[RMDB]
RNA sequence: GGGAACGACUCGAGUAGAGUCGAAAAUAGCCGUACGCAUGCGCUUUUGGCCGAUUUUGCGCGUACUAUCGCGCUUGCUGAUGUGGUGAUUUUACAUAAAAUUUACGCCUCGGCACGUGAGCACAAACCUUAUAUUUACCUUCGGGUAAAUAUAAGGAAAAGAAACAACAACAACAAC
Reactivity to 2A3 in 0.01 (KOAc 150mM, MgCl2 10mM, bicine 150mM(pH8.5), 24C), signal-to-noise 9, nucleotides 027 to 126: u080a020g090c030c020g020u020a010c030g030c030a030u120g050c040g020c080u100u110u090u220g100g020c020c030g060a080u070u060u060u300g050c020g000c000g000u020a060c040u080a080u110c020g000c010g000c030u040u050g000c000u010g000a040u020g010u020g040g030u030g030a030u020u020u030u060a170c130a110u300a090a050a010a020u030u040u080a020c010g000c000c010u000c000g010g000c010a000c010g020u030g030a030g030c050a010c050a120a080a040
Reactivity to DMS in 0.01 (KOAc 150mM, MgCl2 10mM, bicine 150mM(pH8.5), 24C), signal-to-noise 9, nucleotides 027 to 126: u010a130g010c060c050g010u000a030c070g010c020a070u000g010c090g010c030u000u000u000u010g010g020c050c040g010a130u000u000u000u000g010c050g020c020g010u000a060c100u010a100u000c030g010c010g010c080u010u010g010c010u000g010a030u000g010u000g000g010u000g000a030u000u000u000u010a140c270a140u020a030a020a020a030u000u000u000a150c030g000c000c020u000c020g010g010c000a040c030g010u000g000a060g020c170a080c170a060a070a170